This 177-nucleotide RNA was probed chemically with 2A3 and DMS. The 2A3 profile rests on 1,257 reads. Values cover nucleotides 27 to 126. Reactivities are rounded to 0.1 and cut off at 0 and 3. The data come from the RNA Mapping Database (RMDB), library RFM100.
RNA sequence: GGGAACGACUCGAGUAGAGUCGAAAACUCGGGCGGGUGAACAUCCCCGAACCGGCUGGAUUUCGCAGCCCUUGAAGCCCGACGCUCAGCGCAACGAACACACCACAACCACAGACAUGAGACGGCCUCUGAGGCUAAUCUUCGGAUUAGCCUCAGAAAAAGAAACAACAACAACAAC
Reactivity to 2A3 in 0.01 (KOAc 150mM, MgCl2 10mM, bicine 150mM(pH8.5), 24C), signal-to-noise 2, nucleotides 027 to 126: c010u000c000g020g020g010c060g030g040g000u040g040a050a020c030a060u140c010c000c010c020g050a130a120c060c000g010g000c070u140g010g050a080u050u090u010c100g000c020a000g040c040c010c000u010u040g070a020a010g030c000c000c000g010a000c030g000c010u030c020a020g010c010g030c080a060a000c070g040a080a040c110a000c000a030c030c010a010c020a040a050c000c040a020c000a080g050a030c000a070u070g020a030g010a010c010g010g010c020c010
Reactivity to DMS in 0.01 (KOAc 150mM, MgCl2 10mM, bicine 150mM(pH8.5), 24C), signal-to-noise 1, nucleotides 027 to 126: c090u000c010g000g000g000c080g000g000g050u010g000a010a110c300a110u000c030c000c000c000g000a100a100c090c040g000g070c050u000g000g000a170u000u000u000c050g040c010a180g010c070c000c000u010u000g000a000a140g010c000c000c020g020a060c060g000c020u000c050a100g070c070g060c080a100a090c070g000a070a040c090a110c050a040c020c010a030c110a070a090c050c000a030c130a010g020a050c070a000u000g000a060g000a010c000g020g010c050c010